[RMDB]
Conditions: 150 mM KOAc, 10 mM MgCl2 and 150 mM bicine (pH 8.5), 24 C. This 177-nucleotide RNA was probed chemically with 2A3 and DMS. Source: RMDB library OK2TRN, as collected in RNAgym. The 2A3 profile rests on 1,401 reads.
RNA sequence: GGGAACGACUCGAGUAGAGUCGAAAAAUACGCUAUCGCGCGAUAUAUGCGCGCAUAAUAGCGUAUGCGUAUCGCAUAUAUGCGGCGAUAAUAUAUGCGGCGAUAGCGCGCUAUUAUCGCAUAGCGCUCACGUUCAGGUGUUCGCACCUGAACGUGAAAAAGAAACAACAACAACAAC
Reactivity to 2A3 in 0.01 (KOAc 150mM, MgCl2 10mM, bicine 150mM(pH8.5), 24C), signal-to-noise 2, nucleotides 027 to 126: a000u130a030c040g000c020u000a000u000c050g010c000g000c030g040a000u030a000u000a010u270g030c010g000c000g060c000a000u050a020a060u040a080g000c020g000u020a030u080g000c050g060u070a090u160c040g010c030a000u030a000u010a020u220g060c040g070g020c030g010a040u030a150a000u050a030u030a020u090g120c000g080g000c040g100a110u100a070g090c010g020c000g030c020u030a040u070u020a100u120c040g030c080a020u030a010g040c020g030c000
Reactivity to DMS in 0.01 (KOAc 150mM, MgCl2 10mM, bicine 150mM(pH8.5), 24C), signal-to-noise 1, nucleotides 027 to 126: a070u000a010c040g000c000u000a000u010c100g000c000g040c020g000a060u000a060u010a070u000g030c000g010c020g010c050a030u010a080a060u020a050g000c030g010u000a000u010g020c130g000u020a060u010c010g020c000a000u000a020u000a040u000g000c120g030g000c040g020a040u000a130a030u000a030u000a020u000g010c010g000g030c030g000a090u000a080g030c040g020c010g020c000u000a020u010u000a070u010c070g020c090a050u000a030g010c000g010c080